[RMDB]
RNA sequence: GGGAACGACUCGAGUAGAGUCGAAAACGCACUCGCAGCUUAAUAACCUGCGCUGAGCCCUUCUCCCCCAGCUUGCCUGUGUCCUAGGGAAUUGGAAGGUCAUCCUUCACAGGACCGUGUGGAAGUCAUUACUCGUGAGUGUUCGCACUCACGAGAAUCAAAUAUAAUAGUUCGCUAUUAUAUUUGAAAAAGAAACAACAACAACAAC
Reactivity to DMS in 0.01 (KOAc 150mM, MgCl2 10mM, bicine 150mM(pH8.5), 24C), signal-to-noise 4, nucleotides 027 to 156: c070g030c020a100c040u000c020g020c020a040g010c020u000u000a140a130u010a160a120c260c010u000g010c010g020c120u000g010a080g010c020c030c050u000u000c040u000c020c000c010c020c040a120g010c070u000u000g000c030c020u000g000u020g010u000c040c020u000a150g010g010g010a070a130u000u010g030g020a060a080g010g030u010c120a150u010c030c010u000u000c000a120c040a050g020g010a100c000c040g010u000g000u020g020g010a090a280g010u000c050a100u000u000a120c020u000c000g030u000g000a030g030u000g020u000u010c300g020c010a020c000u000c000a020c000g000a000g010a040a100
Reactivity to 2A3 in 0.01 (KOAc 150mM, MgCl2 10mM, bicine 150mM(pH8.5), 24C), signal-to-noise 4, nucleotides 027 to 156: c030g000c010a060c020u030c000g000c000a000g000c010u030u030a050a000u030a060a050c000c000u010g020c000g020c200u040g020a040g020c030c010c000u130u040c100u040c020c000c000c010c000a010g010c020u050u090g070c000c000u080g030u030g010u070c010c020u030a070g040g050g080a120a170u130u080g060g030a030a030g020g020u110c030a110u180c020c000u010u010c020a040c010a050g020g000a010c030c020g050u040g000u080g050g020a030a020g010u030c050a070u040u160a110c000u000c000g010u000g000a010g000u000g040u050u090c110g010c060a000c010u000c000a000c000g000a000g000a000a020
This 207-nucleotide RNA was probed chemically with DMS and 2A3.
For 2A3 the reverse transcriptase was SuperScript II with manganese.
The 2A3 profile rests on 3,825 reads.
The DMS profile rests on 13,302 reads.